[RMDB]
RNA sequence: GGGAACGACUCGAGUAGAGUCGAAAAUCCCAAAGGUUGCCGAAUCCGAAAGGUAUGGAGGAACCGCUUUUUGGGGUUAAUCUGCAGUGAAGCUGCAGUAGGGAUACCUUCUGUCCCGCACCCGACAGCUAACUCCCUAGGCAAUAAAGGAAGGAGAGCCAUUACUGGUAUUCGUACCAGUAAUGGCAAAAGAAACAACAACAACAAC
Reactivity to 2A3 in 0.01 (KOAc 150mM, MgCl2 10mM, bicine 150mM(pH8.5), 24C), signal-to-noise 2, nucleotides 027 to 156: u000c000c000c020a070a010a000g030g000u010u000g000c000c020g040a100a170u100c000c000g060a050a000a000g020g000u040a080u100g010g000a010g020g020a070a130c040c020g040c090u110u160u010u040u150g030g000g010g010u050u030a030a020u010c000u000g000c010a000g010u080g280a190a040g100c000u000g030c000a000g000u000a020g000g000g000a000u050a060c000c000u010u000c010u010g000u000c000c010c000g010c010a080c010c020c000g010a080c100a010g020c010u030a050a010c000u010c020c020c040u070a050g000g000c000a020a020u110a070a040a000g060g000a020a000g010g030a040g020a020
Reactivity to DMS in 0.01 (KOAc 150mM, MgCl2 10mM, bicine 150mM(pH8.5), 24C), signal-to-noise 1, nucleotides 027 to 156: u000c000c000c000a070a090a110g010g020u000u000g050c030c040g030a260a260u000c010c000g000a060a110a170g000g030u010a050u000g000g050a100g000g000a110a080c060c040g000c110u000u040u000u000u020g010g010g000g030u000u000a170a130u000c030u010g000c000a000g000u000g000a090a180g050c000u000g000c000a030g040u000a040g000g030g010a030u000a030c050c040u000u010c020u000g010u010c110c000c010g000c050a090c000c010c000g000a070c070a020g000c080u040a070a210c010u000c010c020c030u010a150g010g030c040a070a050u010a100a040a110g040g000a070a050g050g060a200g000a300
Structure probing data (2A3 and DMS) for a 207-nucleotide construct. The 2A3 profile rests on 1,063 reads. The data come from the RNA Mapping Database (RMDB), library OK3TST. For 2A3 the reverse transcriptase was SuperScript II with manganese. DMS adducts were read by reverse transcription with MarathonRT.